[RMDB]
RNA sequence: GGGAACGACUCGAGUAGAGUCGAAAACAUCACUGCCAGCACUGCAGACGCCAACACCAUCAAUGCGGCUAUUCCUGGGCUGGAGUAUGCUGCAGAGGACAACCUCUGGGUGGUCCAGGGGGGCUGCGAUUAAACUCUAGUUCGCUAGAGUUUAAUCAAAAGAAACAACAACAACAAC
Reactivity to DMS in 0.01 (KOAc 150mM, MgCl2 10mM, bicine 150mM(pH8.5), 24C), signal-to-noise 7, nucleotides 027 to 126: c090a070u010c070a080c050u000g010c020c010a050g010c040a070c050u000g010c050a060g010a100c090g010c040c040a050a070c100a090c040c040a080u000c120a080a110u010g020c010g010g010c010u000a090u010u000c010c010u000g010g010g000c060u000g010g010a070g020u010a050u010g020c030u000g010c010a010g000a070g010g000a140c300a120a130c010c000u000c030u000g000g000g030u000g020g010u000c010c010a050g000g000g000g000g010g000c050u000g010c090
Reactivity to 2A3 in 0.01 (KOAc 150mM, MgCl2 10mM, bicine 150mM(pH8.5), 24C), signal-to-noise 6, nucleotides 027 to 126: c020a050u120c030a010c060u060g010c020c010a020g020c020a020c050u050g010c030a020g050a150c030g030c030c010a040a030c030a040c050c010a030u110c050a060a140u180g000c010g000g010c010u130a300u080u060c010c010u050g040g130g000c050u060g030g020a030g060u100a080u300g040c020u060g130c000a000g000a020g010g020a070c040a140a250c050c000u010c010u020g010g010g030u090g000g020u030c010c000a010g000g000g000g010g010g000c030u030g010c010